Structure probing data (2A3 and DMS) for a 177-nucleotide construct. The reactions ran in a buffer of 150 mM KOAc, 10 mM MgCl2 and 150 mM bicine (pH 8.5), at 24 C. The 2A3 profile rests on 875 reads. DMS adducts were read by reverse transcription with MarathonRT. For 2A3 the reverse transcriptase was SuperScript II with manganese. The DMS profile rests on 1,116 reads.
RNA sequence: GGGAACGACUCGAGUAGAGUCGAAAAUACAUAGUGGAAACACCAGGGCCACAUUACUUAGGUAUCAAGAUGAACGACGUGGAACUAGCUUAAUAAAUUGGCAAAACAUAGACACCAAGAAAUAGAACAUACAAGAGCGUUUCGACGCUCUUGUAUGAAAAGAAACAACAACAACAAC
Reactivity to 2A3 in 0.01 (KOAc 150mM, MgCl2 10mM, bicine 150mM(pH8.5), 24C), signal-to-noise 1, nucleotides 027 to 126: u150a000c050a030u070a080g010u030g010g000a090a040a020c010a050c020c010a060g070g010g060c010c010a040c010a040u030u040a020c040u020u120a040g100g000u030a030u070c040a060a050g070a100u150g010a120a040c040g040a000c060g020u040g020g010a020a010c050u030a020g030c020u060u040a050a000u090a050a220a050u150u030g040g020c000a020a020a020a030c040a010u120a010g030a020c040a020c070c010a050a000g050a030a040a000u150a040g090a070a000
Reactivity to DMS in 0.01 (KOAc 150mM, MgCl2 10mM, bicine 150mM(pH8.5), 24C), signal-to-noise 2, nucleotides 027 to 126: u000a070c080a080u000a090g010u010g010g000a020a170a150c030a090c010c070a060g010g000g000c040c060a040c020a040u000u000a040c090u000u000a080g040g010u000a070u030c030a060a110g030a080u000g020a110a110c100g020a090c080g070u000g000g000a030a050c100u020a070g000c030u000u000a050a070u000a040a030a080u000u000g000g000c060a040a040a070a110c100a070u000a060g000a040c090a050c010c010a020a010g010a060a090a120u010a100g000a090a200